Background
This 177-nucleotide RNA was probed chemically with DMS and 2A3.

RNA sequence: GGGAACGACUCGAGUAGAGUCGAAAAACUUUUAGCGAUUAUCGUUAUAGAUAUGUCCUUGGCAUAUCGCUAUGCACAGAGGUAUUAGUAGCGCAAUAGCUAUUGAAGGACAUUACCUCUCAAAUAACCUAUAGUAGCCGUUCGCGGCUACUAUAGGAAAAGAAACAACAACAACAAC
Reactivity to DMS in 0.01 (KOAc 150mM, MgCl2 10mM, bicine 150mM(pH8.5), 24C), signal-to-noise 2, nucleotides 027 to 126: a060c080u000u010u000u000a000g000c000g010a070u000u010a020u000c020g010u000u020a090u020a160g010a030u000a030u010g010u000c020c000u000u000g000g000c030a020u000a020u000c030g020c030u000a010u000g000c120a180c160a020g000a030g030g010u000a030u000u000a050g020u000a010g000c020g000c120a080a130u010a140g030c000u000a020u000u010g000a070a060g000g020a060c110a050u000u000a020c030c000u000c030u010c190a050a060a090u020a050a120
Reactivity to 2A3 in 0.01 (KOAc 150mM, MgCl2 10mM, bicine 150mM(pH8.5), 24C), signal-to-noise 2, nucleotides 027 to 126: a010c020u080u150u000u030a010g010c000g020a030u000u150a040u120c050g060u100u150a080u070a150g020a060u030a030u040g090u050c040c000u020u110g100g000c030a000u010a020u110c020g000c010u050a060u110g100c060a030c050a110g110a050g000g120u080a050u120u050a050g030u000a010g010c010g020c100a200a090u030a100g000c020u010a030u030u080g100a070a010g040g010a000c000a030u000u020a000c000c000u000c010u010c000a060a060a160u130a050a080